This 207-nucleotide RNA was probed chemically with 2A3. Values are in units of 0.01, from 0 to 300, in steps of 10. The reactions ran in a buffer of 150 mM KOAc, 10 mM MgCl2 and 150 mM bicine (pH 8.5), at 24 C. For 2A3, 1,579 sequencing reads were counted.

RNA sequence: GGGAACGACUCGAGUAGAGUCGAAAAAGCGAUGAUACGUCAUCGCAACGAUUGCCUGAUCGUAAAACAGGAGACGGCCGUGGCCGCGACCACGUAAAAUAGCGUAACGUGGUCUACGGACCACGAAAAAAGCGCGGAACGUUCGCGUUCCGCGCAACACAUCCAUGAAGUUCGCUUCAUGGAUGUGAAAAGAAACAACAACAACAAC
Reactivity to 2A3 in 0.01 (KOAc 150mM, MgCl2 10mM, bicine 150mM(pH8.5), 24C), signal-to-noise 2, nucleotides 027 to 156: a000g000c000g000a000u020g000a010u030a060c190g090u020c000a000u000c000g010c010a030a020c000g010a010u010u040g010c000c000u020g020a030u000c060g120u230a010a070a000a000c000a000g020g020a020g060a020c110g100g000c110c000g010u000g000g000c000c000g000c000g000a020c000c000a000c000g000u010a000a060a090a150u170a030g160c110g130u080a070a020c000g000u000g000g000u000c000u030a060c010g040g020a170c000c000a010c000g030a010a010a000a000a000a000g000c000g000c020g000g000a000a010c000g080u200u130c290g020c020g090u020u000c000c010g030c000g000c000a010a010